[RMDB]
Background
Structure probing data (DMS and 2A3) for a 177-nucleotide construct. For 2A3 the reverse transcriptase was SuperScript II with manganese. The RNA was probed in 150 mM KOAc, 10 mM MgCl2 and 150 mM bicine (pH 8.5) at 24 C. It was measured as part of the RMDB library TTRDES. For DMS, 1,025 sequencing reads were counted. High DMS reactivity at an A or C suggests that its Watson-Crick edge is free.

RNA sequence: GGGAACGACUCGAGUAGAGUCGAAAAGAUAUGGACGUCGUAGGGAGCUCCUGGUCGGAAACGACCAGAGCGAAGAACUACAACGUCCUAAGUCAAAGAUUCCGCUGACUUCGGUCAGCGGAAUCAAGCUUACACCAGUGUUCGCACUGGUGUAAGCAAAAGAAACAACAACAACAAC
Reactivity to DMS in 0.01 (KOAc 150mM, MgCl2 10mM, bicine 150mM(pH8.5), 24C), signal-to-noise 1, nucleotides 027 to 126: g000a000u020a080u020g010g010a000c000g040u000c050g040u000a000g010g050g010a230g030c010u000c240c120u000g000g000u010c000g000g000a000a030a040c010g030a000c000c000a030g020a000g030c020g000a130a110g040a140a300c010u000a000c010a030a000c000g010u010c010c000u000a000a070g010u020c000a140a100a190g000a020u000u010c020c010g030c000u000g050a010c000u010u020c240g010g020u000c000a000g010c000g020g010a000a000u000c000a030a060
Reactivity to 2A3 in 0.01 (KOAc 150mM, MgCl2 10mM, bicine 150mM(pH8.5), 24C), signal-to-noise 1, nucleotides 027 to 126: g010a020u020a030u080g010g000a010c000g020u010c010g010u000a000g080g000g200a200g040c030u090c060c100u040g000g030u030c050g000g040a030a010a000c000g030a000c050c000a010g010a010g000c010g020a140a090g130a050a030c010u000a000c020a030a010c060g000u000c000c020u010a020a010g000u010c030a120a030a200g030a020u010u000c010c000g010c000u010g020a010c030u080u090c300g070g040u010c010a020g010c000g000g010a000a000u000c000a000a020